[RMDB]
RNA sequence: GGGAACGACUCGAGUAGAGUCGAAAAGACCAGCCUGGCCAAGAUGGUGAAACCCCGUCUUGACUAAAAAUACAAAAAACUAGCCGGGCGUGGUGGCGGGUGCCUGUAAUCCCAGCUACUUGGGAGGCACAUUUCAUCGGUUCGCCGAUGAAAUGUGAAAAGAAACAACAACAACAAC
Reactivity to DMS in 0.01 (KOAc 150mM, MgCl2 10mM, bicine 150mM(pH8.5), 24C), signal-to-noise 2, nucleotides 027 to 126: g010a110c020c020a090g000c000c000u010g010g020c010c000a020a040g010a020u010g000g010u000g000a080a050a180c210c130c000c000g010u000c000u000u000g010a080c130u010a000a040a070a100a060u010a060c130a010a070a040a050a060a120c160u000a110g010c020c020g000g010g010c010g010u000g000g000u010g010g020c070g000g000g050u000g020c020c010u010g000u010a050a130u010c020c010c010a040g000c130u020a030c110u020u000g000g000g010a060g000g040